Chemical mapping of a 177-nucleotide RNA with 2A3.
It was measured as part of the RMDB library RFM100.
For 2A3 the reverse transcriptase was SuperScript II with manganese.
The reactions ran in a buffer of 150 mM KOAc, 10 mM MgCl2 and 150 mM bicine (pH 8.5), at 24 C.

[RMDB]
RNA sequence: GGGAACGACUCGAGUAGAGUCGAAAACCUGGAGCCGGAUGCUGAGAACGAGGCCUGCAACUCAUUUCCCCAUUAAACAUUCUGAGAACAUCUGCACCGGUUUCCAAGGCUUCUCCCUCACUAAUUGGGCACGGGUUAUAUUCGUAUAACCCGUGCCAAAAGAAACAACAACAACAAC
Reactivity to 2A3 in 0.01 (KOAc 150mM, MgCl2 10mM, bicine 150mM(pH8.5), 24C), signal-to-noise 1, nucleotides 027 to 126: c030c030u070g010g000a000g000c000c000g020g020a240u000g000c000u090g000a020g000a010a000c090g090a100g060g060c080c000u030g010c010a000a090c000u000c030a010u060u010u020c060c040c100c000a060u000u150a120a140a000c090a050u040u020c100u170g060a090g020a060a010c030a210u070c060u050g000c000a000c000c040g000g000u250u170u010c000c000a040a000g000g020c060u080u040c000u020c020c020c000u020c000a090c000u130a100a200u090u120g000